The record gives the reactivity of an RNA of 177 nucleotides to 2A3 and DMS.
The RNA was probed in 150 mM KOAc, 10 mM MgCl2 and 150 mM bicine (pH 8.5) at 24 C.
RNA sequence: GGGAACGACUCGAGUAGAGUCGAAAACGGCCCGGACCGGACUGGGCGCGGUCGGCGGCGGAGUCGGGGAUCGGCAGCUCCGGCACGAUCAGGUGGAAGCCGCGCUGGUCGGCGGGCGCGCUGUCGAAUGCCCUAAAUACUUCGGUAUUUAGGGCAUAAAAGAAACAACAACAACAAC
Reactivity to 2A3 in 0.01 (KOAc 150mM, MgCl2 10mM, bicine 150mM(pH8.5), 24C), signal-to-noise 2, nucleotides 027 to 126: c010g080g000c050c020c000g000g090a100c040c030g090g070a070c040u190g140g030g000c040g010c020g000g030u100c110g070g110c050g030g020c000g060g020a170g000u020c000g000g000g010g050a030u030c000g010g000c010a000g020c010u000c010c000g030g000c030a020c000g070a190u140c040a070g180g010u110g090g100a120a010g010c040c020g000c000g000c010u100g030g000u010c040g000g070c040g000g010g000c020g000c010g000c010u010g020u000c030g010a020
Reactivity to DMS in 0.01 (KOAc 150mM, MgCl2 10mM, bicine 150mM(pH8.5), 24C), signal-to-noise 1, nucleotides 027 to 126: c060g000g000c000c000c000g020g000a120c060c020g020g010a070c060u000g000g010g020c000g010c000g010g010u010c070g010g030c110g000g010c020g010g000a090g080u010c010g010g010g000g010a140u010c010g010g000c020a050g000c000u010c010c000g000g010c010a060c020g000a080u000c030a130g000g040u010g020g010a210a240g020c030c000g020c010g010c000u010g000g010u000c000g030g010c030g000g000g010c060g000c140g010c020u010g010u010c010g020a080